[RMDB]
RNA sequence: GGGAACGACUCGAGUAGAGUCGAAAAGGGACACGAUGCCGGUGACCCGCUUGGCGGUCAGCGGCACAUACCGCAGCAGCACCCCGGCGUGCACCGUCAUGUAGUCCACGCCUUGCUCACACUGCUCCUGGUGUAUGUUCUUCGGAACAUACACCAGAAAAGAAACAACAACAACAAC
Reactivity to 2A3 in 0.01 (KOAc 150mM, MgCl2 10mM, bicine 150mM(pH8.5), 24C), signal-to-noise 7, nucleotides 027 to 126: g040g000g010a020c020a020c170g120a080u030g010c020c010g030g050u040g090a300c010c060c000g020c050u120u300g090g020c100g010g000u030c040a030g030c020g020g000c020a000c010a020u080a010c010c020g000c030a060g010c020a000g020c020a100c010c010c000c000g010g000c000g010u010g010c000a010c010c000g040u040c010a020u080g070u170a030g020u030c010c000a020c010g030c000c010u030u110g020c010u030c010a070c010a020c040u060g020c010u020c020
Reactivity to DMS in 0.01 (KOAc 150mM, MgCl2 10mM, bicine 150mM(pH8.5), 24C), signal-to-noise 3, nucleotides 027 to 126: g000g000g040a040c000a040c130g010a020u000g000c000c030g010g000u000g000a140c020c050c000g060c090u020u020g040g050c120g060g000u000c010a120g000c020g000g040c110a020c120a090u050a130c070c020g000c030a070g040c140a140g020c140a030c030c010c000c000g000g000c010g010u000g030c060a010c030c000g000u000c010a030u040g000u070a090g010u010c000c020a060c040g000c010c010u030u010g000c010u030c080a120c110a070c050u010g010c070u010c060
This 177-nucleotide RNA was probed chemically with 2A3 and DMS. The reactions ran in a buffer of 150 mM KOAc, 10 mM MgCl2 and 150 mM bicine (pH 8.5), at 24 C. For 2A3 the reverse transcriptase was SuperScript II with manganese. For DMS the reverse transcriptase was MarathonRT.